[RMDB]
RNA sequence: GGGAACGACUCGAGUAGAGUCGAAAACACACGUGCUUCGGCACGUGUGAAACCUUGUCAAAAUAACGCAAGACUAGGAAAGCGUAAGUACGAAAGUACAAAAAAGGUGAGUGUUCGCACUCACCAACGUUAGUAAACAGUUCGCUGUUUACUAACGAAAAGAAACAACAACAACAAC
Reactivity to 2A3 in 0.01 (KOAc 150mM, MgCl2 10mM, bicine 150mM(pH8.5), 24C), signal-to-noise 9, nucleotides 027 to 126: c000a000c000a000c000g010u010g010c000u040u040c100g140g000c000a000c000g000u000g000u000g010a000a000a000c010c000u030u090g140u060c020a050a040a070a260u140a150a040c030g020c060a120a060g040a100c060u130a060g110g050a120a030a000g010c030g050u100a090a120g000u010a020c000g040a150a020a010g000u000a010c000a020a110a010a020a010a020g010g000u000g000a000g000u020g040u050u120c220g010c070a010c000u000c000a000c000c000a000a000
Reactivity to DMS in 0.01 (KOAc 150mM, MgCl2 10mM, bicine 150mM(pH8.5), 24C), signal-to-noise 8, nucleotides 027 to 126: c000a010c000a000c000g020u000g010c000u000u020c200g030g020c000a000c000g010u000g020u010g000a030a070a140c020c000u000u010g010u000c110a080a060a080a090u010a090a060c050g020c040a080a090g010a100c070u000a070g010g010a100a090a120g010c030g010u000a080a130g010u000a000c000g000a120a060a120g010u000a010c020a000a040a050a050a110a090g000g030u000g000a010g010u000g010u000u020c190g010c000a010c000u000c000a000c000c000a010a020

The record gives the reactivity of an RNA of 177 nucleotides to 2A3 and DMS.
2A3 adducts were read by reverse transcription with SuperScript II with manganese.
DMS adducts were read by reverse transcription with MarathonRT.
The RNA was probed in 150 mM KOAc, 10 mM MgCl2 and 150 mM bicine (pH 8.5) at 24 C.
Values cover nucleotides 27 to 126.